Description:
Structure probing data (DMS and 2A3) for a 170-nucleotide construct. 2A3 is a SHAPE reagent: it acylates the 2'-hydroxyl of flexible nucleotides of all four kinds. The reactions ran in a buffer of 150 mM KOAc, 10 mM MgCl2 and 150 mM bicine (pH 8.5), at 24 C.
[RMDB]
RNA sequence: GGGAACGACUCGAGUAGAGUCGAAAAUAUACCAUUGUGUAUAGUACCUUACACUGCAUUGUACUAUUAUGCUACAUUCUAUUUUACUAAUGAGCCUGCAUUUAUUAUGCAUGUUUCUUGGUACAUUUAAGCGAGCAGUUCGCUGCUCGCAAAAGAAACAACAACAACAAC
Reactivity to DMS in 0.01 (KOAc 150mM, MgCl2 10mM, bicine 150mM(pH8.5), 24C), signal-to-noise 4, nucleotides 027 to 129: u010a110u070a160c000c040a120u120u050g020u060g000u000a040u000a030g000u150a130c000c080u030u040a040c120a180c160u010g070c110a060u050u020g030u000a140c070u050a000u060u020a060u020g000c070u010a060c160a060u000u000c090u070a050u020u030u040u010a010c010u000a000a000u050g030a000g020c050c030u040g080c020a000u000u020u040a090u000u000a060u000g010c000a060u040g040u000u020u010c050u030u000g000g030u020a020c300a030u020u010u050a050a070
Reactivity to 2A3 in 0.01 (KOAc 150mM, MgCl2 10mM, bicine 150mM(pH8.5), 24C), signal-to-noise 6, nucleotides 027 to 129: u060a010u010a010c030c030a110u080u160g050u020g000u040a020u000a040g030u040a050c000c000u010u040a060c140a060c100u120g030c030a060u030u040g040u010a030c020u060a060u230u050a060u000g010c000u050a020c030a090u030u110c030u140a090u080u170u060u040a030c010u030a000a010u140g000a000g000c000c010u020g000c010a000u020u050u040a220u300u130a020u070g020c000a000u010g020u020u050u040c010u010u020g000g000u000a020c010a080u080u090u010a070a000